[RMDB]
RNA sequence: GGGAACGACUCGAGUAGAGUCGAAAAAACUGUGGGCAUAGUCGGUGCGACAGCCCUAUAGCUAUAGAAGAAGUCAGAGGGGAUGCGCACGCAGGAGUCAUCCGCAUCCAGACAUCAGCUAUGUUCGUGAUCUACUAGCGUUCGCGCUAGUAGAUCAAAAAGAAACAACAACAACAAC
Reactivity to 2A3 in 0.01 (KOAc 150mM, MgCl2 10mM, bicine 150mM(pH8.5), 24C), signal-to-noise 1, nucleotides 027 to 126: a000a030c150u140g040u230g030g000g000c010a040u020a050g050u050c090g170g000u100g070c050g020a030c010a000g000c010c010c000u000a010u000a000g040c000u000a000u040a140g090a160a040g060a080a000g020u130c050a020g050a100g060g060g000g060a030u000g060c010g000c020a070c090g000c020a050g100g130a060g050u040c050a020u000c020c020g000c010a000u060c060c000a030g020a080c000a060u100c050a010g000c000u000a020u080g120u010u030c000g020
Reactivity to DMS in 0.01 (KOAc 150mM, MgCl2 10mM, bicine 150mM(pH8.5), 24C), signal-to-noise 2, nucleotides 027 to 126: a100a070c040u010g020u000g010g020g000c000a030u010a050g010u020c070g030g000u000g000c020g010a100c050a140g000c130c030c000u010a020u000a080g010c070u000a150u030a100g000a110a090g010a070a040g000u010c060a120g000a110g020g040g000g000a050u000g000c070g020c180a080c130g010c080a140g020g010a100g000u000c100a100u000c100c010g030c050a070u000c010c050a080g000a080c060a100u010c010a090g010c010u000a050u000g020u000u000c020g000